[RMDB]
RNA sequence: GGGAACGACUCGAGUAGAGUCGAAAAGAUUACGUGUCGUUGUGGAUUCGAUACUACGCACGAGAUUCCAAGGUCUCUGUAGUACGUCCGCUGGUGACGUCUUUGGAGUCACGUUCGAUAUACGAAAGGUAUCUAGAAGGUUCGCCUUCUAGAUACCAAAAGAAACAACAACAACAAC
Reactivity to DMS in 0.01 (KOAc 150mM, MgCl2 10mM, bicine 150mM(pH8.5), 24C), signal-to-noise 3, nucleotides 027 to 126: g020a150u050u010a070c120g010u000g010u000c010g010u010u010g000u000g000g010a220u010u000c020g010a080u000a010c050u010a040c000g000c120a020c050g020a030g000a020u000u010c040c100a040a030g000g020u020c040u010c070u010g000u040a060g000u030a010c040g000u000c000c000g000c110u030g010g010u050g010a000c000g000u000c030u010u020u000g000g000a050g000u000c010a050c010g010u020u000c000g010a100u000a030u010a100c020g010a030a070a150
Reactivity to 2A3 in 0.01 (KOAc 150mM, MgCl2 10mM, bicine 150mM(pH8.5), 24C), signal-to-noise 5, nucleotides 027 to 126: g130a050u200u200a050c110g000u010g040u060c040g030u030u070g010u010g030g040a060u050u020c020g000a010u000a030c060u060a050c040g010c030a010c040g000a000g010a010u060u010c060c030a060a050g060g000u040c030u010c050u150g070u090a100g100u070a100c000g010u010c020c010g040c140u140g070g080u150g010a000c010g030u020c020u040u040u050g070g000a000g000u000c000a000c020g020u050u050c000g010a010u010a000u020a080c050g060a050a020a040

Chemical mapping of a 177-nucleotide RNA with DMS and 2A3. The DMS profile rests on 8,115 reads. The reactions ran in a buffer of 150 mM KOAc, 10 mM MgCl2 and 150 mM bicine (pH 8.5), at 24 C.